[RMDB]
The record gives the reactivity of an RNA of 177 nucleotides to DMS and 2A3. It was measured as part of the RMDB library OK1LIB. The RNA was probed in 150 mM KOAc, 10 mM MgCl2 and 150 mM bicine (pH 8.5) at 24 C.
RNA sequence: GGGAACGACUCGAGUAGAGUCGAAAACAAACAAACCAACCACACUCAGAGCCCAAAUGAGCCGCGUUAACCUCAUCUCAGCGGCAGAGAUGAAAAGGACGCAUACGUCCAAAGGGCUCUGACAAAACAUCUGCUAACACUUCGGUGUUAGCAGAUGAAAAGAAACAACAACAACAAC
Reactivity to DMS in 0.01 (KOAc 150mM, MgCl2 10mM, bicine 150mM(pH8.5), 24C), signal-to-noise 1, nucleotides 027 to 126: c240a190a210a240c120a020a100a110c070c040a070a190c040c080a070c070a130c120u000c000a030g000a000g020c000c000c000a050a090a070u030g000a040g000c020c150g000c000g020u000u000a070a240c280c120u000c000a010u000c000u000c020a120g000c010g050g140c020a210g000a000g000a000u060g000a000a000a140a230g000g020a000c000g010c000a090u000a070c290g030u000c030c030a020a060a300g000g000g000c000u010c000u000g000a000c280a010a020a030a070
Reactivity to 2A3 in 0.01 (KOAc 150mM, MgCl2 10mM, bicine 150mM(pH8.5), 24C), signal-to-noise 3, nucleotides 027 to 126: c050a030a100a000c020a060a100a000c020c040a020a050c030c030a060c000a020c030u010c000a010g000a000g000c010c010c000a020a100a100u060g000a000g030c020c000g020c010g030u030u040a060a100c020c020u000c000a010u000c000u000c000a050g040c010g130g000c040a020g000a000g000a000u010g000a050a020a000a000g050g000a000c000g000c010a010u080a200c040g050u040c040c000a060a020a000g020g000g000c000u000c000u000g000a010c010a000a040a000a000